RNA sequence: GGGAACGACUCGAGUAGAGUCGAAAAAAUAGCUGCAAGGGACGUAGCCACAAGGCAGGUUUUGGCCGUGGGCGUGGUCAUCCAGCAGUUGCACGUAGUCGGCAAAAUUCUCAUCGCCUUGGCGGUAGAUGGAUAUGAGUUUCGACUCAUAUCCAUCAAAAGAAACAACAACAACAAC
Reactivity to DMS in 0.01 (KOAc 150mM, MgCl2 10mM, bicine 150mM(pH8.5), 24C), signal-to-noise 8, nucleotides 027 to 126: a070a050u010a080g020c010u000g010c020a080a150g010g000g000a050c030g020u000a300g010c010c010a080c050a060a070g010g020c000a110g020g010u000u000u010u000g010g010c000c010g020u000g000g000g010c030g010u010g010g010u010c030a070u000c040c020a240g000c030a030g000u010u000g010c070a060c060g010u000a100g010u010c070g000g000c040a070a060a060a120u000u000c030u000c040a080u000c060g010c010c030u010u010g010g010c040g010g010u000a110
Reactivity to 2A3 in 0.01 (KOAc 150mM, MgCl2 10mM, bicine 150mM(pH8.5), 24C), signal-to-noise 8, nucleotides 027 to 126: a000a000u260a020g000c020u010g000c010a050a070g030g010g000a020c020g040u060a020g030c010c000a160c010a130a070g030g000c020a030g080g100u070u100u180u220g170g000c010c020g010u080g030g040g010c010g050u080g060g010u020c000a010u020c010c010a010g010c020a010g010u020u060g050c030a040c070g100u160a050g070u090c060g010g000c030a000a050a010a090u090u020c030u000c030a070u070c020g010c010c020u040u150g080g000c040g030g030u060a060